[RMDB]
RNA sequence: GGGAACGACUCGAGUAGAGUCGAAAAGAUCCAUCCGAAACGUACGCGUUAGGUGCUCACAAUAGUCAAUUAUAUAUCGUGUCUGCACAUUAUUGUGGUAGCAUGCGAAAGGAUGGCACCCAUCCGAAACGUACGCCAGACGAUUGGCAUGCGAAAGAAGACAUAAGGCUUUCGAGCCUUAUGUCUUAAAAGAAACAACAACAACAAC
Reactivity to 2A3 in 0.01 (KOAc 150mM, MgCl2 10mM, bicine 150mM(pH8.5), 24C), signal-to-noise 4, nucleotides 027 to 156: g040a090u050c000c000a000u000c000c000g050a080a040a040c040g040u070a010c130g010c010g140u030u070a060g000g060u020g010c000u020c000a010c020a020a010u020a020g040u060c020a040a070u300u060a090u050a070u040a060u260c070g060u050g160u110c130u210g090c120a030c000a060u060u090a020u040u060g010u010g000g090u070a020g010c010a010u120g200c020g020a020a000a020g000g000a010u000g000g000c010a090c000c000c000a000u070c060c040g170a090a100a080c000g010u030a000c050g000c010c000a030g050a180c180g120a200u080u120g000g000c020a010u080g010c030g100a120a060a060g210
Reactivity to DMS in 0.01 (KOAc 150mM, MgCl2 10mM, bicine 150mM(pH8.5), 24C), signal-to-noise 2, nucleotides 027 to 156: g000a110u000c000c000a040u010c010c010g000a030a130a120c010g070u010a010c040g050c030g020u000u000a150g020g060u000g020c000u000c000a060c010a030a040u000a080g020u000c050a040a180u000u000a160u010a140u020a050u010c040g000u000g020u000c050u000g000c040a040c070a100u000u020a030u000u010g010u010g000g000u010a030g080c020a060u000g020c040g000a100a110a300g000g020a050u010g000g010c100a060c000c030c020a110u000c050c050g010a100a160a070c020g000u000a000c030g000c040c030a120g030a150c070g000a150u010u000g000g000c060a120u000g000c010g040a060a120a100g030
Overview
Source: RMDB library OK3TST, as collected in RNAgym. This 207-nucleotide RNA was probed chemically with 2A3 and DMS. Values cover nucleotides 27 to 156. For DMS the reverse transcriptase was MarathonRT. The reactions ran in a buffer of 150 mM KOAc, 10 mM MgCl2 and 150 mM bicine (pH 8.5), at 24 C. 2A3 adducts were read by reverse transcription with SuperScript II with manganese.